[RMDB]
RNA sequence: GGGAACGACUCGAGUAGAGUCGAAAAACAAGGUUAAGUAAAGUAGAUAUGCAUGUACAUAUUCAUGUAGACAAGUUAACUCGUUAGAUAGACAUACACACAUCUGUCUGUCUGUUGAUCGGUCUGUCUGCGUAUGACUCCUUGACAGUUAAAGAUAUCGUGGAAAAUGAUUCGUCAUUUUCCACGAAAAAGAAACAACAACAACAAC
Reactivity to DMS in 0.01 (KOAc 150mM, MgCl2 10mM, bicine 150mM(pH8.5), 24C), signal-to-noise 3, nucleotides 027 to 156: a060c040a060a070g010g030u000u000a050a150g000u010a070a070a140g010u000a090g020a060u000a080u000g020c020a080u000g050u020a300c040a060u000a110u000u000c070a040u000g030u010a020g020a040c020a060a060g020u000u010a040a050c040u000c040g020u000u010a060g020a010u000a010g010a040c000a110u000a130c160a110c200a140c100a090u000c080u030g030u000c010u000g010u000c020u000g010u030u000g010a070u000c110g000g020u000c030u010g010u010c030u000g020c030g010u000a050u000g020a130c120u000c050c040u000u000g020a090c080a060g010u000u000a060a020a060g000a110u000a130
Reactivity to 2A3 in 0.01 (KOAc 150mM, MgCl2 10mM, bicine 150mM(pH8.5), 24C), signal-to-noise 5, nucleotides 027 to 156: a000c020a020a020g100g020u150u170a010a030g010u090a190a050a060g040u050a040g070a010u050a040u100g030c110a100u140g050u140a090c010a020u110a030u020u180c020a030u070g010u020a020g000a000c060a100a020g030u140u200a090a070c070u060c240g010u040u120a010g000a000u010a000g000a000c010a010u050a020c040a000c030a000c000a170u150c050u070g000u000c010u000g020u010c000u010g040u000u040g040a080u210c020g010g010u010c010u000g010u000c000u000g000c000g000u030a040u110g040a010c020u030c030c030u020u030g010a030c060a130g050u080u150a110a100a010g050a090u110a050